[RMDB]
RNA sequence: GGGAACGACUCGAGUAGAGUCGAAAAGUCUUCGAUCUGCCGUUCUACCGGUCGGUGCUGAACUGGCUGUUCGUGGCCGUGGUUCUGGCGUUUCUAGCGAGCCUGUUGACGCAUUACCUGUUCGGCGGUUAUUCCAUCGCUUCGGCGAUGGAAUAACAAAAGAAACAACAACAACAAC
Reactivity to DMS in 0.01 (KOAc 150mM, MgCl2 10mM, bicine 150mM(pH8.5), 24C), signal-to-noise 2, nucleotides 027 to 126: g000u040c020u010u000c070g020a070u020c070u010g010c020c010g040u000u000c080u000a060c110c120g000g000u000c150g010g000u010g030c080u000g020a080a000c010u010g000g010c000u000g020u040u030c050g020u000g030g000c010c020g050u050g020g020u020u010c070u000g050g000c030g000u020u000u000c050u000a150g000c090g000a120g020c060c040u010g020u010u000g010a250c180g000c040a080u000u020a090c060c000u000g010u000u000c020g000g000c070g000
Reactivity to 2A3 in 0.01 (KOAc 150mM, MgCl2 10mM, bicine 150mM(pH8.5), 24C), signal-to-noise 4, nucleotides 027 to 126: g010u000c030u090u080c020g090a140u050c020u060g040c000c020g040u080u050c050u080a100c070c030g040g080u120c180g040g050u080g020c040u040g000a030a020c010u040g030g000c030u030g060u070u070c040g020u090g050g030c000c010g090u130g030g180u130u050c110u150g080g000c030g030u060u060u070c100u080a050g030c020g080a030g030c000c030u070g040u150u070g020a030c000g000c000a000u040u050a030c020c030u040g040u030u050c000g010g040c000g000